[RMDB]
RNA sequence: GGGAACGACUCGAGUAGAGUCGAAAACGUGAAGCUAGCGCCGACGUCGAAGCUGGCUCCGGUGACUCCGGCCGCCGAGGUGCGUGUGCGCCGGCAGCCGCUGACGGUAGCCGUCGUCGGGUCCGGGUACACCCUUCCAAUUCGUUGGAAGGGUGUAAAAAGAAACAACAACAACAAC
Reactivity to DMS in 0.01 (KOAc 150mM, MgCl2 10mM, bicine 150mM(pH8.5), 24C), signal-to-noise 4, nucleotides 027 to 126: c080g010u010g010a090a070g020c030u000a150g020c050g030c050c010g010a050c050g000u000c030g010a140a130g000c000u010g030g020c010u000c020c000g010g000u000g000a130c050u000c060c010g010g000c010c020g010c110c130g000a190g010g020u000g000c040g020u010g010u010g000c020g010c010c010g000g020c120a040g000c020c000g020c050u010g000a090c080g000g010u010a090g010c060c010g020u000c020g000u010c010g020g000g000u010c020c040g000g000g010
Reactivity to 2A3 in 0.01 (KOAc 150mM, MgCl2 10mM, bicine 150mM(pH8.5), 24C), signal-to-noise 3, nucleotides 027 to 126: c040g060u090g110a110a000g040c050u060a010g040c060g030c040c040g020a030c000g040u080c060g090a070a010g030c070u100g030g000c010u000c000c000g000g000u040g050a130c020u010c010c010g020g010c010c010g020c040c050g150a140g100g000u190g140c020g050u300g060u040g030c020g000c000c000g000g000c030a000g010c000c020g030c040u010g020a040c060g000g050u020a020g050c010c030g020u030c000g020u010c000g000g000g030u030c020c040g040g070g020